Source: RMDB library 15KREP, as collected in RNAgym. An RNA of 177 nucleotides, treated with 2A3 and DMS and read out base by base. For DMS, 728 sequencing reads were counted.
RNA sequence: GGGAACGACUCGAGUAGAGUCGAAAAACCGGCUCAUCUCGGCAAGGGGCGGCAGUCCUCAGUACUCUUACUCUUUCCUAUAAAGAGGAGACUGCUGGACUCGCCGCCCGAGCCCGAGCAUGGGCCCGCUAACUUCUAUGUUCGCAUAGAAGUUAGCAAAAGAAACAACAACAACAAC
Reactivity to 2A3 in 0.01 (KOAc 150mM, MgCl2 10mM, bicine 150mM(pH8.5), 24C), signal-to-noise 2, nucleotides 027 to 126: a000c000c000g000g000c010u000c000a010u000c000u010c000g000g000c020a040a120g070g000g010g000c010g000g000c000a000g000u000c000c010u000c000a010g010u150a300c040u010c000u090u160a250c010u040c020u040u100u060c070c080u160a140u200a300a020a000g010a010g010g000a000g010a000c000u000g070c050u000g000g000a000c000u000c020g010c010c000g020c010c000c000g000a000g000c010c000c000g000a000g010c030a000u000g000g030g000c080c010c000
Reactivity to DMS in 0.01 (KOAc 150mM, MgCl2 10mM, bicine 150mM(pH8.5), 24C), signal-to-noise 1, nucleotides 027 to 126: a130c050c030g030g020c050u030c010a020u000c010u000c000g000g010c050a270a170g010g030g020g020c000g020g000c010a010g000u000c000c000u000c010a010g010u000a220c040u010c010u000u000a300c050u000c000u010u010u010c220c250u010a180u000a010a010a020g020a010g000g000a030g010a070c010u000g000c240u000g010g010a010c000u000c210g020c000c000g000c000c030c000g010a030g000c170c010c020g020a010g010c160a000u000g010g010g000c010c000c060

Source information: Reactivities are given for positions 27 through 126. For 2A3 the reverse transcriptase was SuperScript II with manganese.